[RMDB]
This 177-nucleotide RNA was probed chemically with 2A3 and DMS.
It was measured as part of the RMDB library OK2TRN.
2A3 adducts were read by reverse transcription with SuperScript II with manganese.
RNA sequence: GGGAACGACUCGAGUAGAGUCGAAAACACUGCAGCCGGGGAUGCGAGUGCGGAUGCUGGAUGAUUAUGAGGAGAUCAGUGCCGGGGAUGAGGGCGAGUUUCGGCAGAGCAACAACGGUGUGCCUCCCCUAGCUAGGAUGUUCGCAUCCUAGCUAGGAAAAGAAACAACAACAACAAC
Reactivity to 2A3 in 0.01 (KOAc 150mM, MgCl2 10mM, bicine 150mM(pH8.5), 24C), signal-to-noise 1, nucleotides 027 to 126: c030a010c040u090g000c000a000g020c020c030g020g010g010g030a040u070g000c030g000a070g080u100g010c050g000g000a040u060g030c080u060g030g070a070u060g010a010u070u150a090u200g010a050g080g010a100g000a020u070c040a010g050u020g070c000c000g020g000g000g000a030u100g030a050g000g030g000c020g020a070g030u040u070u030c010g000g050c070a020g010a010g070c020a020a050c010a060a000c050g030g000u090g000u030g040c000c000u030c000c010
Reactivity to DMS in 0.01 (KOAc 150mM, MgCl2 10mM, bicine 150mM(pH8.5), 24C), signal-to-noise 2, nucleotides 027 to 126: c080a110c120u000g010c050a100g010c030c020g020g000g040g000a060u000g040c050g000a070g020u000g000c050g000g020a100u000g000c020u000g010g020a080u000g010a060u000u010a070u020g000a130g010g010a160g000a060u000c050a080g020u010g000c060c030g030g000g000g000a090u000g020a070g000g000g020c080g000a080g000u000u000u000c060g010g010c060a060g010a110g010c040a030a030c120a050a140c150g020g010u010g010u000g010c040c030u000c060c050
The reactions ran in a buffer of 150 mM KOAc, 10 mM MgCl2 and 150 mM bicine (pH 8.5), at 24 C. The 2A3 profile rests on 1,846 reads.